[RMDB]
Chemical mapping of a 177-nucleotide RNA with 2A3 and DMS. For DMS the reverse transcriptase was MarathonRT. Conditions: 150 mM KOAc, 10 mM MgCl2 and 150 mM bicine (pH 8.5), 24 C. Values cover nucleotides 27 to 126. Source: RMDB library RFM100, as collected in RNAgym. The 2A3 profile rests on 1,106 reads.
RNA sequence: GGGAACGACUCGAGUAGAGUCGAAAAUAAUGGCUGGAGUCUGGAGCUCGAUAAAGUCGGCGGAAGUUUGUCGUAACAGCGUGGCAACACGGCUGACGAAAGUGCAGUAGAGGUACUGUAUGCAGAUUUUGCUUUAUUCGUUCGCGAAUAAAGCAAAAAAAGAAACAACAACAACAAC
Reactivity to 2A3 in 0.01 (KOAc 150mM, MgCl2 10mM, bicine 150mM(pH8.5), 24C), signal-to-noise 1, nucleotides 027 to 126: u090a000a090u080g030g050c020u020g050g030a050g060u010c020u050g070g000a050g000c000u020c000g020a010u140a060a130a020g050u050c040g020g070c010g000g000a000a000g040u040u090u080g090u070c020g000u020a070a000c000a000g020c010g010u000g000g010c050a040a010c040a030c040g000g000c020u000g000a000c020g020a050a030a000g050u060g000c030a000g000u050a020g000a080g060g050u000a000c020u010g010u020a050u060g030c060a020g000a190u060
Reactivity to DMS in 0.01 (KOAc 150mM, MgCl2 10mM, bicine 150mM(pH8.5), 24C), signal-to-noise 3, nucleotides 027 to 126: u060a100a040u030g010g000c000u000g000g010a050g010u000c040u010g000g000a160g010c030u010c060g020a080u010a010a060a090g030u000c030g010g020c030g000g000a070a080g010u000u020u000g000u000c010g000u000a090a040c050a000g000c010g010u000g000g000c300a100a200c010a000c000g000g000c020u000g010a140c000g020a050a080a080g020u010g000c010a030g000u010a050g000a120g010g020u010a020c010u010g000u000a010u010g020c080a080g010a260u010